An RNA of 177 nucleotides, treated with DMS and 2A3 and read out base by base. For 2A3 the reverse transcriptase was SuperScript II with manganese. The DMS profile rests on 2,870 reads. DMS adducts were read by reverse transcription with MarathonRT. The data come from the RNA Mapping Database (RMDB), library TTRDES. Conditions: 150 mM KOAc, 10 mM MgCl2 and 150 mM bicine (pH 8.5), 24 C.
RNA sequence: GGGAACGACUCGAGUAGAGUCGAAAAGAUAUGGAGCACAUACGUUCAACAGCAUGCCACUCGGAAACGAGUGCAUGACAUGAACGAUGUGCUCCUAAGUCAAACCCCACUCCUUCGGGAGUGGGGAUCCUAUGUUCGUGUUCGCACGAACAUAGGAAAAAGAAACAACAACAACAAC
Reactivity to DMS in 0.01 (KOAc 150mM, MgCl2 10mM, bicine 150mM(pH8.5), 24C), signal-to-noise 3, nucleotides 027 to 126: g000a040u000a300u000g010g000a020g040c000a020c010a000u000a140c020g020u000u000c030a050a070c290a280g000c010a010u000g000c200c120a020c000u010c000g010g000a040a100a110c000g010a010g010u000g010c000a000u000g010a030c100a280u020g000a000a010c000g020a020u000g030u000g010c000u000c020c000u000a000a080g000u000c050a100a140a150c010c000c000c010a020c000u000c000c000u000u010c210g050g000g000a000g040u000g000g010g000g000a010
Reactivity to 2A3 in 0.01 (KOAc 150mM, MgCl2 10mM, bicine 150mM(pH8.5), 24C), signal-to-noise 4, nucleotides 027 to 126: g010a010u040a020u100g000g000a000g100c020a010c020a010u300a300c080g010u010u020c110a290a170c050a230g030c010a010u010g110c180c110a040c020u000c000g000g010a020a050a060c010g000a000g010u000g000c000a000u000g040a040c020a250u300g000a000a000c000g000a010u010g000u000g000c000u000c000c000u010a000a010g000u000c000a000a020a120c000c010c000c000a010c000u010c020c000u040u180c300g170g000g000a000g000u010g000g000g000g000a010